[RMDB]
RNA sequence: GGGAACGACUCGAGUAGAGUCGAAAAGAUAUGGACGUCACAGCUUUUGACGGCUCGUCGGAAACGACAGAGCCGAUAAGCUGGACGUCCUAAGUCAAACAACAACGUCGUUCGCGACGUUGUUGAAGCAUUUAUUUUAGUUCGCUAAAAUAAAUGCAAAAGAAACAACAACAACAAC
Reactivity to DMS in 0.01 (KOAc 150mM, MgCl2 10mM, bicine 150mM(pH8.5), 24C), signal-to-noise 7, nucleotides 027 to 126: g010a030u000a260u000g010g000a010c010g020u000c000a130c010a010g010c000u000u000u000u010g020a210c040g010g000c000u000c000g010u000c000g010g000a070a060a120c000g000a010c000a130g010a010g010c000c000g010a010u000a000a020g020c000u000g000g000a000c000g010u000c000c000u000a000a050g010u000c030a120a130a280c010a000a010c000a000a000c010g000u000c000g010u000u020c250g020c010g000a010c000g000u000u000g000u000u000g000a060a110
Reactivity to 2A3 in 0.01 (KOAc 150mM, MgCl2 10mM, bicine 150mM(pH8.5), 24C), signal-to-noise 9, nucleotides 027 to 126: g010a010u040a020u080g000g000a010c010g000u010c020a040c010a300g000c020u120u210u280u300g240a080c000g000g000c000u000c000g010u000c000g010g020a040a040a020c020g030a020c150a170g010a010g000c000c000g020a010u040a060a000g000c000u000g000g000a000c000g000u000c000c000u000a000a000g000u000c010a020a030a070c000a000a000c000a000a000c000g000u000c000g020u070u120c300g010c010g130a000c000g000u000u000g000u000u010g000a020a010